[RMDB]
An RNA of 177 nucleotides, treated with 2A3 and DMS and read out base by base.
RNA sequence: GGGAACGACUCGAGUAGAGUCGAAAAUUAAAGUACGUAGAAGCGGCGUGAAGCAUGUAGAAAGCUUUGCGAGCAUAUCGAGCUACAUGUGAGCGAAAGCGGUUACGUACAACGAUAUGCUAAAAAAGAUCAUAAUAUGCUUCGGCAUAUUAUGAUCAAAAGAAACAACAACAACAAC
Reactivity to 2A3 in 0.01 (KOAc 150mM, MgCl2 10mM, bicine 150mM(pH8.5), 24C), signal-to-noise 4, nucleotides 027 to 126: u050u030a060a020a030g010u000a010c010g000u010a020g020a120a010g140c030g200g010c030g060u020g030a020a000g010c000a000u000g000u010a020g040a120a140a010g020c030u150u140u180g150c120g040a020g000c010a020u030a030u100c040g000a020g030c000u010a000c010a000u030g090u140g030a020g020c050g050a090a090a050g000c000g020g000u030u020a000c000g000u000a000c010a000a000c000g000a000u040a020u120g040c090u170a110a060a030a030a000a030
Reactivity to DMS in 0.01 (KOAc 150mM, MgCl2 10mM, bicine 150mM(pH8.5), 24C), signal-to-noise 4, nucleotides 027 to 126: u000u000a050a110a120g000u000a000c000g000u000a010g010a090a080g010c030g010g030c080g040u000g000a110a230g000c000a000u000g000u000a030g000a090a120a130g010c090u010u010u000g020c170g010a080g020c040a030u000a010u000c020g010a150g000c010u000a020c000a000u000g010u000g010a210g020c020g000a050a080a110g010c020g000g000u010u000a000c010g000u000a000c000a080a090c080g000a020u000a010u000g020c050u000a000a040a090a060a040a080
Conditions: 150 mM KOAc, 10 mM MgCl2 and 150 mM bicine (pH 8.5), 24 C.